[RMDB]
Chemical mapping of a 177-nucleotide RNA with DMS and 2A3. The DMS profile rests on 1,057 reads. For 2A3, 1,797 sequencing reads were counted. 2A3 adducts were read by reverse transcription with SuperScript II with manganese. The data come from the RNA Mapping Database (RMDB), library TTRDEL. DMS adducts were read by reverse transcription with MarathonRT.
RNA sequence: GGGAACGACUCGAGUAGAGUCGAAAAGAUAUGGACUACCCACCCGUGGAACUACGCUCCUCUGGUCGGAAACGACCAUGAGCGCCACGGAGGUCCUAAGUCGCGCACGUACGUUCGCGUACGUGAAGAUGCCUAGAGGGUUCGCCCUCUAGGCAUCAAAAGAAACAACAACAACAAC
Reactivity to DMS in 0.01 (KOAc 150mM, MgCl2 10mM, bicine 150mM(pH8.5), 24C), signal-to-noise 2, nucleotides 027 to 126: g000a090u010a180u000g000g040a020c000u010a130c010c010c000a300c190c030c040g020u020g000g000a160a030c100u000a300c010g000c000u000c010c010u020c020u000g000g000u010c000g000g000a050a090a160c000g000a010c010c000a000u000g000a030g000c000g000c000c010a030c000g000g000a060g000g000u010c000c000u010a090a130g010u000c030g050c300g000c000a000c010g000u010a000c000g040u000u000c170g020c010g020u000a000c000g010u000g020a020a110
Reactivity to 2A3 in 0.01 (KOAc 150mM, MgCl2 10mM, bicine 150mM(pH8.5), 24C), signal-to-noise 1, nucleotides 027 to 126: g040a010u160a050u150g000g010a000c020u150a210c030c000c070a040c000c030c030g020u000g030g000a120a100c130u200a050c300g000c000u000c000c000u020c020u010g000g000u020c000g010g030a080a120a080c010g000a000c000c020a000u050g000a010g070c030g000c000c000a000c000g010g000a020g050g000u010c000c020u060a260a040g140u040c080g010c030g080c130a010c030g050u000a000c020g040u010u080c280g000c020g140u010a000c000g000u010g020a000a040